Chemical mapping of a 207-nucleotide RNA with DMS and 2A3. For DMS the reverse transcriptase was MarathonRT. 2A3 adducts were read by reverse transcription with SuperScript II with manganese. The RNA was probed in 150 mM KOAc, 10 mM MgCl2 and 150 mM bicine (pH 8.5) at 24 C. For 2A3, 2,460 sequencing reads were counted.
RNA sequence: GGGAACGACUCGAGUAGAGUCGAAAACUCAAUGUAGGGACUAACAUUGAAUUGAUACAAAUACCUUUUUCGGUGUAGGGAAAAACACCGAAUUGAUACAAAUACCUUUCUCAAUGUAGGGAAUAACAAAACAGGCAUCGCUUCGGCGAUGCCUGAAGUGAUCAUAAAUGUUCGCAUUUAUGAUCACAAAAGAAACAACAACAACAAC
Reactivity to DMS in 0.01 (KOAc 150mM, MgCl2 10mM, bicine 150mM(pH8.5), 24C), signal-to-noise 1, nucleotides 027 to 156: c010u000c020a130a200u000g010u000a070g010g000g020a140c020u000a130a010c010a000u000u010g000a060a030u010u000g000a050u000a090c030a070a250a060u010a030c010c010u010u000u000u000u010c010g010g040u060g030u000a100g020g020g030a110a030a300a140a030c000a010c000c010g000a010a010u010u010g010a070u010a040c030a020a190a070u000a000c010c030u020u000u000c040u000c030a050a020u000g020u000a160g000g000g000a080a110u000a060a070c050a060a050a150a150c030a010g010g000c000a010u000c000g010c000u010u000c300g060g000c000g030a010u000g010c010c000u000g000a000a020
Reactivity to 2A3 in 0.01 (KOAc 150mM, MgCl2 10mM, bicine 150mM(pH8.5), 24C), signal-to-noise 4, nucleotides 027 to 156: c020u000c010a000a040u060g020u060a080g110g070g110a080c040u070a050a020c080a010u010u020g030a050a070u070u110g090a120u170a200c090a040a130a030u180a070c010c010u010u020u000u010u010c000g000g000u000g010u010a010g040g010g070a080a180a060a020a000c000a000c000c000g000a000a000u010u030g030a000u020a020c030a000a090a030u110a100c010c020u030u110u050c060u030c050a060a150u190g070u110a070g020g000g040a010a080u070a130a050c090a050a080a020a020c010a000g000g000c000a000u000c000g030c000u080u020c170g030g000c000g000a000u000g000c000c010u000g000a000a000